[RMDB]
RNA sequence: GGGAACGACUCGAGUAGAGUCGAAAAGCGCAGGGCUUCGCCGUCGUGGCAGGCCGCACUGAUCGGCAAUGGCUGGCCUCCCCACUCGGCCAGCUUGCGCAACGCCAUCGCCACCGGUAGGUCCAGAGUAGGCGUAUACUUUCGAGUAUACGCCUACAAAAGAAACAACAACAACAAC
Reactivity to DMS in 0.01 (KOAc 150mM, MgCl2 10mM, bicine 150mM(pH8.5), 24C), signal-to-noise 3, nucleotides 027 to 126: g010c110g040c100a130g000g000g030c010u000u000c170g050c010c000g000u010c190g030u000g040g040c100a130g000g010c050c110g010c070a110c130u000g000a110u010c140g010g000c020a060a180u010g000g000c010u000g000g010c000c010u000c070c050c060c070a100c140u000c160g020g000c020c010a010g010c010u000u000g020c300g010c020a050a070c170g000c020c020a070u010c070g010c000c010a020c010c020g000g020u000a030g060g010u000c000c010a150g000a170
Reactivity to 2A3 in 0.01 (KOAc 150mM, MgCl2 10mM, bicine 150mM(pH8.5), 24C), signal-to-noise 2, nucleotides 027 to 126: g080c100g080c090a070g000g010g000c020u080u080c110g010c000c000g040u130c080g000u020g020g060c020a000g000g030c030c020g080c000a050c120u170g060a240u180c040g110g000c050a020a030u040g060g000c020u010g010g010c010c000u120c030c020c000c000a080c020u140c080g010g010c000c000a000g000c040u000u000g030c020g000c020a070a090c040g000c000c000a090u090c120g000c010c000a010c030c000g020g010u030a010g000g060u000c000c000a000g000a000